[RMDB]
Overview: Conditions: 150 mM KOAc, 10 mM MgCl2 and 150 mM bicine (pH 8.5), 24 C. The record gives the reactivity of an RNA of 177 nucleotides to DMS and 2A3.

RNA sequence: GGGAACGACUCGAGUAGAGUCGAAAAGAUAUGGAUGUUCGUCGUGGCGAAGAACUAUGAUCGGAAACGAUCAUAGGGAGCCAUGGACGAGACAUCCUAAGUCAAAAGGUCCAGUUCGCUGGACCAACGCUGUUGUAAAGUUCGCUUUACAACAGCGAAAAGAAACAACAACAACAAC
Reactivity to DMS in 0.01 (KOAc 150mM, MgCl2 10mM, bicine 150mM(pH8.5), 24C), signal-to-noise 3, nucleotides 027 to 126: g000a050u000a300u000g010g000a010u000g010u000u000c010g040u000c020g040u000g010g000c020g020a130a180g010a150a240c010u000a000u000g000a000u000c000g000g000a130a150a270c000g020a000u000c000a010u000a000g000g010g000a140g020c020c010a000u000g000g030a010c010g000a080g000a030c010a000u010c020c000u000a030a140g000u000c060a110a100a200a170g000g020u000c000c010a000g000u000u020c290g020c000u020g010g010a050c010c020a040a030
Reactivity to 2A3 in 0.01 (KOAc 150mM, MgCl2 10mM, bicine 150mM(pH8.5), 24C), signal-to-noise 3, nucleotides 027 to 126: g040a030u080a070u200g020g000a010u000g020u040u010c000g010u010c020g020u010g020g000c020g220a300a020g000a050a020c010u010a010u000g000a010u010c020g030g050a090a070a020c020g000a000u000c000a000u000a000g000g000g000a020g000c000c020a010u060g130g010a000c000g030a030g040a000c000a000u000c000c000u000a110a000g100u040c030a030a070a030a270g020g000u000c010c010a000g020u070u090c270g060c110u020g010g000a000c000c000a010a010
For 2A3, 6,435 sequencing reads were counted.
As a SHAPE reagent, 2A3 marks flexible, mostly unpaired nucleotides at the ribose 2'-OH.
The data come from the RNA Mapping Database (RMDB), library TTRDES.